An RNA of 177 nucleotides, treated with DMS and read out base by base.
[RMDB]
RNA sequence: GGGAACGACUCGAGUAGAGUCGAAAAAAAAAUAACUAGCAUGCAUAAGACGAGGAAGAGCGCGCGCUCUACCAAAAGAUGUGUGUAAAAGCGCACGUGUAGGCGCGCAUACACGAAUAAACAAAAAGCCAAUUUAUAAGUUCGCUUAUAAAUUGGCAAAAGAAACAACAACAACAAC
Reactivity to DMS in 0.01 (KOAc 150mM, MgCl2 10mM, bicine 150mM(pH8.5), 24C), signal-to-noise 2, nucleotides 027 to 126: a000a100a050a250a010u000a040a090c060u000a090g000c020a020u030g000c080a010u000a060a030g000a070c150g040a090g000g020a060a080g000a060g040c100g020c010g000c020g020c000u010c030u000a040c020c070a060a080a110a090g000a030u000g010u000g050u000g000u000a060a080a100a160g030c010g000c020a030c020g000u000g030u000a010g010g000c010g000c010g000c000a050u010a040c060a060c030g000a070a060u010a070a030a050c070a060a090a060a030a060
The data come from the RNA Mapping Database (RMDB), library M2PK90.